[RMDB]
RNA sequence: GGGAACGACUCGAGUAGAGUCGAAAAGUCCUAGCGAAAAGCUAGGACAAGUGCAUCGCUAGACCGAUCGUCGAAAAGACGAUCGAAAGAUGCACAUGUCUAGCAAGUCGAGGAGAACUCGACAAAAAUACGUGCAGGUAUUCGUACCUGCACGUAUAAAAGAAACAACAACAACAAC
Reactivity to DMS in 0.01 (KOAc 150mM, MgCl2 10mM, bicine 150mM(pH8.5), 24C), signal-to-noise 2, nucleotides 027 to 126: g030u020c010c000u000a080g010c120g000a130a150a060a120g000c000u000a000g070g020a000c000a000a010g000u000g000c000a020u000c000g000c190u020a080g020a070c130c020g000a000u010c000g050u010c000g000a110a080a150a100g000a000c000g020a000u000c040g000a010a010a120g030a030u000g000c030a000c010a030u010g000u000c040u000a080g030c080a040a120g030u000c000g010a000g000g000a140g050a120a130c000u000c020g000a040c030a000a000a080a140
Reactivity to 2A3 in 0.01 (KOAc 150mM, MgCl2 10mM, bicine 150mM(pH8.5), 24C), signal-to-noise 4, nucleotides 027 to 126: g010u030c000c000u010a000g040c030g110a230a110a080a010g000c000u010a000g000g010a000c000a000a000g000u000g000c020a060u040c040g060c130u100a030g070a070c030c010g000a000u000c000g000u000c000g040a100a140a090a030g010a000c000g000a000u020c000g000a000a030a000g090a010u110g020c010a000c000a000u040g020u000c030u030a020g100c070a110a060g000u010c000g000a020g000g010a200g000a220a190c000u000c000g000a000c000a000a000a000a000